Source: RMDB library OK2TST, as collected in RNAgym. Chemical mapping of a 177-nucleotide RNA with 2A3 and DMS. For DMS, 3,014 sequencing reads were counted. The RNA was probed in 150 mM KOAc, 10 mM MgCl2 and 150 mM bicine (pH 8.5) at 24 C.

[RMDB]
RNA sequence: GGGAACGACUCGAGUAGAGUCGAAAAUCCGCCUCUGCGAUCGGAUACUACGGACAUGCGCGUGGAGACGAAAUUCUUGAUGAAGGAUCCACUCAAGGCGACGACUUCCUAGCCGGUGUGUGCGAAGGAAUAGGAUCGAGUUCGCUCGAUCCUAUUCAAAAGAAACAACAACAACAAC
Reactivity to 2A3 in 0.01 (KOAc 150mM, MgCl2 10mM, bicine 150mM(pH8.5), 24C), signal-to-noise 3, nucleotides 027 to 126: u020c010c000g030c040c010u060c020u070g020c040g110a120u080c050g010g040a050u040a160c030u060a040c060g000g050a020c010a100u110g000c070g030c020g030u020g020g020a020g000a010c060g060a030a030a050u170u090c090u070u200g080a160u090g060a070a030g080g000a030u020c010c020a020c000u070c040a040a070g060g000c020g020a060c020g010a030c060u030u000c000c000u030a030g010c010c010g060g000u060g000u000g010u000g010c040g070a050a010g130
Reactivity to DMS in 0.01 (KOAc 150mM, MgCl2 10mM, bicine 150mM(pH8.5), 24C), signal-to-noise 3, nucleotides 027 to 126: u000c030c020g020c040c030u000c050u000g000c020g020a110u000c060g020g010a120u000a110c060u000a100c100g010g000a090c120a060u000g010c080g010c060g000u000g000g010a210g000a130c050g000a090a110a080u000u010c050u010u000g000a100u010g000a130a050g000g000a110u000c030c040a100c100u000c070a050a190g000g000c040g010a100c060g000a080c090u010u000c020c010u000a120g030c030c000g010g020u000g000u000g020u000g020c040g000a140a080g010